[RMDB]
RNA sequence: GGGAACGACUCGAGUAGAGUCGAAAAGAUAUGGAAGGCUUCCUACUGGAGUAACUAGUUCGGAAACGAACUAUUUACUAUGAAGGUAGGAGAGCCUUCCUAAGUCAAAGGUCGUCUUCGGACGACCGUUGCGAUAGAUCUUCGGAUCUAUCGCAACAAAAGAAACAACAACAACAAC
Reactivity to 2A3 in 0.01 (KOAc 150mM, MgCl2 10mM, bicine 150mM(pH8.5), 24C), signal-to-noise 2, nucleotides 027 to 126: g000a040u030a040u200g020g000a000a000g010g020c000u020u000c010c000u000a010c010u020g010g050a020g000u000a000a010c020u010a010g010u000u000c000g020g020a080a080a050c010g000a010a000c000u010a010u000u000u000a010c020u030a300u160g020a010a000g010g000u030a030g000g000a030g000a000g010c020c000u060u000c000c000u000a000a010g030u000c060a190a120a140g000g000u000c000g000u030c020u030u110c300g170g010a000c000g000a000c010c010
Reactivity to DMS in 0.01 (KOAc 150mM, MgCl2 10mM, bicine 150mM(pH8.5), 24C), signal-to-noise 3, nucleotides 027 to 126: g020a020u000a300u030g000g000a020a010g000g000c010u000u000c010c000u000a010c010u000g010g000a020g000u010a000a020c120u000a000g000u000u000c000g010g010a120a090a240c020g000a010a010c000u000a000u000u010u000a020c000u000a180u010g000a200a130g010g000u000a010g020g010a030g000a010g030c000c000u040u000c000c000u000a010a100g020u000c050a070a130a200g010g000u000c010g010u000c000u000u020c300g020g000a020c000g000a000c010c000

Structure probing data (2A3 and DMS) for a 177-nucleotide construct. Values cover nucleotides 27 to 126. The reactions ran in a buffer of 150 mM KOAc, 10 mM MgCl2 and 150 mM bicine (pH 8.5), at 24 C. DMS (dimethyl sulfate) methylates the pairing face of unpaired adenines and cytosines.